[RMDB]
Structure probing data (2A3 and DMS) for a 177-nucleotide construct.
The reactions ran in a buffer of 150 mM KOAc, 10 mM MgCl2 and 150 mM bicine (pH 8.5), at 24 C.
DMS adducts were read by reverse transcription with MarathonRT.
Reactivities are rounded to 0.1 and cut off at 0 and 3.

RNA sequence: GGGAACGACUCGAGUAGAGUCGAAAAUAGUAACGGCGAGUGAAGCGGGAAGAGCUCAAGCUUAAAAUCUCCGUGCAAGUUUUGCGCGGCGAAUUGUAGUCUAUAGAGGCGUGAUCAGUGUGGGCGCUCUGGAAUAAUUAUUCGUAAUUAUUCCAGAAAAAGAAACAACAACAACAAC
Reactivity to 2A3 in 0.01 (KOAc 150mM, MgCl2 10mM, bicine 150mM(pH8.5), 24C), signal-to-noise 9, nucleotides 027 to 126: u120a010g080u040a070a020c030g020g010c010g010a020g040u080g050a080a010g020c020g000g020g010a030a030g010a010g010c010u020c070a040a020g000c010u060u070a020a040a050a110u030c010u000c000c000g000u010g000c010a080a200g060u110u220u260u060g000c000g000c000g000g000c010g010a020a010u040u060g050u060a040g020u010c010u030a080u030a130g080a020g040g010c020g010u030g010a060u060c050a050g030u010g000u040g070g020g010c030g000c020
Reactivity to DMS in 0.01 (KOAc 150mM, MgCl2 10mM, bicine 150mM(pH8.5), 24C), signal-to-noise 9, nucleotides 027 to 126: u030a070g010u020a070a090c090g000g010c030g010a070g010u010g010a080a120g000c070g000g000g010a070a070g010a110g000c050u010c090a080a090g010c030u000u010a070a040a050a090u000c010u000c000c000g010u000g000c000a020a110g010u010u030u020u010g020c000g010c000g000g000c080g000a020a060u010u010g010u010a040g010u010c030u010a090u020a110g010a070g010g010c040g010u010g000a070u010c060a070g010u010g020u010g000g000g010c090g020c150